[RMDB]
RNA sequence: GGGAACGACUCGAGUAGAGUCGAAAACGACACCAUCAAAAAAUUUCCACGUCAAUAGGAAUUCGCGCACGGAAUCCACAAACACUUUGCGUUUGGAAGAAUCGUGGAAAUGGUAAAACGGAUCCGAUAACGUCCAACCGCCGAUUGACGGUAAUACCACUCAGCCAUGUUUCGACAUGGCUGAGUGAAAAGAAACAACAACAACAAC
Reactivity to 2A3 in 0.01 (KOAc 150mM, MgCl2 10mM, bicine 150mM(pH8.5), 24C), signal-to-noise 1, nucleotides 027 to 156: c000g090a070c050a050c030c070a080u150c120a080a000a030a000a000a110u070u070u060c000c000a000c000g030u000c000a000a220u050a190g010g010a050a090u040u040c000g000c010g080c070a000c050g030g100a070a010u120c150c000a070c020a010a000a000c030a080c000u090u130u300g030c020g010u060u180u000g000g000a150a130g000a060a040u110c010g000u040g000g000a000a010a030u030g030g000u050a150a070a000a130c050g010g030a030u090c030c000g090a050u070a070a130c110g000u000c000c040a070a010c000c110g000c000c000g200a190u030u090g070a080c010g000g040u080a050a050u080a110c000